Chemical mapping of a 177-nucleotide RNA with 2A3 and DMS. The RNA was probed in 150 mM KOAc, 10 mM MgCl2 and 150 mM bicine (pH 8.5) at 24 C.
RNA sequence: GGGAACGACUCGAGUAGAGUCGAAAAAUGGCCCUUACGCCUAGGGCGACACACGUGCUACAAUGGCAUAUACAAUGAGACGCAAUACCGCGAGGUGGAGCAAAUCUAUAAAAUAUGUCCCAGUUCGUUCACCGGUGACAUUCGUGUCACCGGUGAAAAAAGAAACAACAACAACAAC
Reactivity to 2A3 in 0.01 (KOAc 150mM, MgCl2 10mM, bicine 150mM(pH8.5), 24C), signal-to-noise 1, nucleotides 027 to 126: a010u060g080g000c000c000c000u000u070a050c080g160c040c040u050a040g000g000g100c000g030a000c030a000c000a020c050g150u040g040c000u150a040c050a130a220u120g000g000c000a020u050a000u010a010c070a000a100u220g000a010g040a010c050g000c000a010a010u080a050c050c050g020c030g060a040g000g010u010g040g000a030g010c010a030a030a030u000c000u040a000u030a010a100a040a020u000a000u050g000u050c000c000c110a000g010u050u060c010g000
Reactivity to DMS in 0.01 (KOAc 150mM, MgCl2 10mM, bicine 150mM(pH8.5), 24C), signal-to-noise 2, nucleotides 027 to 126: a000u000g040g000c000c000c070u000u000a000c000g000c000c010u000a030g000g000g000c020g000a120c030a150c300a000c050g000u040g050c020u030a000c200a210a000u100g000g020c000a020u000a000u030a000c290a150a060u000g000a100g000a300c300g000c010a050a300u020a070c000c060g080c300g000a290g070g040u010g010g020a300g000c000a000a070a060u000c000u060a100u060a000a030a070a080u000a040u040g000u000c030c120c040a040g000u020u060c040g000